[RMDB]
RNA sequence: GGGAACGACUCGAGUAGAGUCGAAAAGUCGGCUUCCUCUCACUUCGUGGAAAUUUGUUGGCUCUGCCUGCGGUUAUCUCGGCAGUAACUUUGUGAAGGUGAGCGACGAUAUUCAAACACAAGGGGCUAGGUAGAAGUGAUUCGUCACUUCUACCUAAAAAGAAACAACAACAACAAC
Reactivity to 2A3 in 0.01 (KOAc 150mM, MgCl2 10mM, bicine 150mM(pH8.5), 24C), signal-to-noise 1, nucleotides 027 to 126: g040u020c010g100g040c080u050u000c020c010u000c020u040c000a170c060u070u090c060g020u090g010g060a080a060a120u070u100u190g090u020u080g110g000c020u010c050u120g020c030c010u010g030c040g020g000u090u050a110u060c070u030c140g080g050c020a060g000u020a040a050c020u100u120u200g090u030g130a030a010g000g000u040g010a010g000c000g000a000c000g000a010u000a120u150u040c040a060a080a050c020a010c040a110a060g000g000g040g000c050
Reactivity to DMS in 0.01 (KOAc 150mM, MgCl2 10mM, bicine 150mM(pH8.5), 24C), signal-to-noise 2, nucleotides 027 to 126: g010u000c040g010g010c070u000u000c060c020u010c120u010c100a140c100u010u020c300g000u010g000g000a050a070a250u020u020u000g030u010u000g020g010c020u010c050u010g040c000c000u010g020c070g000g000u000u000a030u010c040u000c140g020g000c070a100g020u000a030a050c040u000u020u000g040u010g000a130a010g010g010u000g010a030g010c010g000a030c030g000a070u020a100u000u010c090a070a060a270c070a030c100a030a030g010g000g000g000c270
An RNA of 177 nucleotides, treated with 2A3 and DMS and read out base by base. DMS adducts were read by reverse transcription with MarathonRT. The reactions ran in a buffer of 150 mM KOAc, 10 mM MgCl2 and 150 mM bicine (pH 8.5), at 24 C. It was measured as part of the RMDB library OK2TST.